[RMDB]
RNA sequence: GGGAACGACUCGAGUAGAGUCGAAAACUCUGACGCUUCGGCGUCAGAGAAACCUCUAAGCAGAUUGCCGAGGACGACGCUGCGGAGCGCGUUUGCCAACAAAAACGCAUAGAUUCGUCUAUGCGAAUCUGGCCAUUAAGUUCGCUUAAUGGCCAGAAAAAGAAACAACAACAACAAC
Reactivity to DMS in 0.01 (KOAc 150mM, MgCl2 10mM, bicine 150mM(pH8.5), 24C), signal-to-noise 1, nucleotides 027 to 126: c000u000c000u060g000a030c000g010c000u010u020c160g000g040c000g000u030c000a000g010a000g000a000a050a100c010c000u000c080u000a240a140g000c010a120g010a180u000u040g020c040c100g080a070g010g030a300c030g030a040c010g000c010u000g040c000g010g030a020g000c120g010c050g000u000u000u000g040c030c030a100a140c230a040a020a020a140a160c000g000c000a040u000a010g000a040u000u010c120g040u000c000u010a010u000g000c000g000a050a010
Reactivity to 2A3 in 0.01 (KOAc 150mM, MgCl2 10mM, bicine 150mM(pH8.5), 24C), signal-to-noise 2, nucleotides 027 to 126: c000u000c000u000g000a020c000g000c040u020u040c190g170g010c000g020u010c010a000g000a000g010a000a000a000c000c000u000c040u040a080a020g000c030a040g150a300u240u270g030c010c030g010a000g040g010a020c000g000a010c010g000c020u090g010c020g050g010a010g000c300g000c030g020u000u000u030g300c020c000a030a020c070a030a140a000a020a000c000g000c000a000u000a010g010a010u000u030c140g000u000c130u010a020u020g030c010g010a000a050

This 177-nucleotide RNA was probed chemically with DMS and 2A3. For 2A3, 1,498 sequencing reads were counted. Reactivities are given for positions 27 through 126. For 2A3 the reverse transcriptase was SuperScript II with manganese. The RNA was probed in 150 mM KOAc, 10 mM MgCl2 and 150 mM bicine (pH 8.5) at 24 C.